[RMDB]
The record gives the reactivity of an RNA of 177 nucleotides to DMS and 2A3. The data come from the RNA Mapping Database (RMDB), library OK1LIB. Values cover nucleotides 27 to 126.

RNA sequence: GGGAACGACUCGAGUAGAGUCGAAAAAAAAGGACUUAUAGAAGUACCAUCUAUGAUUGCCACUGAGGCAGCUUUUCUUUGUUUUGCAUAUGGACUACCAGUAAUGACUCAUAAUGUCUCAACGAGCGUAAAAGAACACAUUCGUGUGUUCUUUUACAAAAGAAACAACAACAACAAC
Reactivity to DMS in 0.01 (KOAc 150mM, MgCl2 10mM, bicine 150mM(pH8.5), 24C), signal-to-noise 5, nucleotides 027 to 126: a040a030a030a060g000g000a110c100u010u010a070u020a020g000a050a070g020u030a100c180c100a080u000c020u020a020u000g000a040u040u000g000c040c010a130c190u050g010a120g020g000c020a040g000c070u010u000u010u000c040u010u010u020g000u000u000u000u000g020c050a050u030a070u010g010g020a050c040u000a050c070c030a060g020u000a060a030u010g000a080c010u010c060a040u010a040a050u020g000u000c020u000c050a070a090c160g010a060g000c250
Reactivity to 2A3 in 0.01 (KOAc 150mM, MgCl2 10mM, bicine 150mM(pH8.5), 24C), signal-to-noise 9, nucleotides 027 to 126: a000a000a000a010g090g010a050c060u130u080a070u120a230g120a110a010g040u080a240c020c020a040u020c030u100a130u070g100a180u090u110g020c030c020a060c120u140g020a100g060g000c020a010g050c030u070u110u040u050c050u020u090u100g110u070u110u070u080g040c030a040u070a090u170g020g030a040c020u080a090c050c020a020g020u080a140a130u080g020a020c000u020c030a020u080a170a050u170g050u010c020u000c030a050a150c080g060a030g080c070